[RMDB]
RNA sequence: GGGAACGACUCGAGUAGAGUCGAAAAGGCGCUGGUUUGUACCGCCAGUUGCUGUAGAGCUUGCGCAUUGACCAUCGUAAAUACAUUCAGUAUUUCAGCCGGUUUUUCUGGUGCGGUAUUGCCAUCACAUGUAAGGCUGUUUCGACAGCCUUACAUGAAAAGAAACAACAACAACAAC
Reactivity to 2A3 in 0.01 (KOAc 150mM, MgCl2 10mM, bicine 150mM(pH8.5), 24C), signal-to-noise 2, nucleotides 027 to 126: g020g000c000g000c010u010g090g020u030u120u210g210u120a070c000c050g000c000c010a030g020u070u300g020c050u050g040u040a060g010a010g050c040u080u140g000c010g000c020a050u000u110g050a040c010c010a050u010c060g100u140a000a000a030u040a020c010a050u040u270c050a070g020u010a030u000u030u020c000a020g020c050c050g040g040u050u070u030u070u070c040u100g010g010u030g020c030g060g000u070a060u030u120g030c040c020a070u120c040a020
Reactivity to DMS in 0.01 (KOAc 150mM, MgCl2 10mM, bicine 150mM(pH8.5), 24C), signal-to-noise 4, nucleotides 027 to 126: g010g020c020g000c010u010g010g010u000u000u010g020u010a050c110c100g000c020c030a040g000u000u000g060c010u010g010u010a090g000a120g010c030u000u000g010c090g010c080a030u010u000g010a050c030c030a090u010c140g010u010a010a010a020u010a010c020a190u010u000c240a120g000u000a010u010u000u000c040a200g010c110c070g010g000u010u000u010u000u010c070u020g000g020u000g010c050g000g000u010a060u000u000g000c040c040a090u000c120a190